[RMDB]
RNA sequence: GGGAACGACUCGAGUAGAGUCGAAAACCCUCACUCUUCGGAGUGAGGGAAAUCUGAUUCCCAAUAGCUGGGUAUCCGGGCUAAGACGGAUAGGCGUUGCCAAAAGAUCUGGCUUCGGCCAGAUCAAUCCGUUAUAUACCUUCGGGUAUAUAACGGAAAAAGAAACAACAACAACAAC
Reactivity to 2A3 in 0.01 (KOAc 150mM, MgCl2 10mM, bicine 150mM(pH8.5), 24C), signal-to-noise 2, nucleotides 027 to 126: c000c000c000u000c000a000c000u000c000u020u100c260g160g000a000g010u000g010a010g010g000g000a070a060a030u130c050u090g060a150u030u030c000c000c000a000a120u130a020g000c010u020g070g040g110u050a040u010c020c020g020g060g040c080u140a060a030g150a040c010g010g010a010u020a020g060g030c120g280u200u290g070c030c000a020a070a010a070g000a000u010c000u010g010g000c000u030u060c110g100g000c000c010a010g000a000u000c000a000a010
Reactivity to DMS in 0.01 (KOAc 150mM, MgCl2 10mM, bicine 150mM(pH8.5), 24C), signal-to-noise 3, nucleotides 027 to 126: c000c000c000u010c000a000c000u000c000u000u010c180g020g010a020g010u000g000a020g020g000g000a000a010a020u010c150u010g020a250u000u000c010c010c000a140a120u020a030g020c030u000g020g000g020u000a040u000c010c010g010g020g020c040u000a080a090g010a090c040g000g000a030u000a040g010g000c040g010u010u000g020c030c010a070a080a090a100g000a020u000c000u000g000g000c010u000u020c200g030g000c000c000a010g000a000u000c000a080a100

An RNA of 177 nucleotides, treated with 2A3 and DMS and read out base by base.
Conditions: 150 mM KOAc, 10 mM MgCl2 and 150 mM bicine (pH 8.5), 24 C.
The data come from the RNA Mapping Database (RMDB), library M2PK50.
The 2A3 profile rests on 1,562 reads.
DMS adducts were read by reverse transcription with MarathonRT.